Record summary: Structure probing data (2A3 and DMS) for a 170-nucleotide construct. The RNA was probed in 150 mM KOAc, 10 mM MgCl2 and 150 mM bicine (pH 8.5) at 24 C. DMS adducts were read by reverse transcription with MarathonRT. For DMS, 70,555 sequencing reads were counted.

[RMDB]
RNA sequence: GGGAACGACUCGAGUAGAGUCGAAAAUUGAAGGUAAAACAGCCUGUGGGUGAAACACACCCACAGGGCCCAUUGGGCGCUAGCACUCUGGUAUCACGGUACCUUUGUGCGCCUGUUUUAGCGAAGGGGACUAACAGCUUCGGCUGUUAGAAAAGAAACAACAACAACAAC
Reactivity to 2A3 in 0.01 (KOAc 150mM, MgCl2 10mM, bicine 150mM(pH8.5), 24C), signal-to-noise 3, nucleotides 027 to 129: u110u090g050a040a010g110g030u030a000a000a000a000c000a000g000c000c000u000g000u010g000g000g000u000g020a030a090a000c150a010c000a010c040c000c010a000c010a000g000g000g000c000c000c000a000u260u300g000g000g000c020g000c090u110a080g010c010a010c000u000c010u000g000g000u000a000u020c020a030c220g120g000u000a010c000c000u000u000u000g000u000g000c000g000c000c000u000g000u000u000u000u000a010g010c000g050a040a020g030g010g000g020a010
Reactivity to DMS in 0.01 (KOAc 150mM, MgCl2 10mM, bicine 150mM(pH8.5), 24C), signal-to-noise 7, nucleotides 027 to 129: u030u020g020a180a130g000g000u020a010a010a000a010c020a000g010c000c020u000g000u000g000g000g000u000g000a110a170a090c250a210c010a000c010c000c000a000c000a000g010g000g020c030c010c020a020u030u040g010g000g000c000g000c010u030a040g040c020a010c000u020c020u010g000g010u000a000u020c060a110c300g020g000u010a000c020c000u010u010u000g020u000g020c030g000c000c000u000g010u010u000u000u000a030g010c020g020a130a070g000g000g030g000a300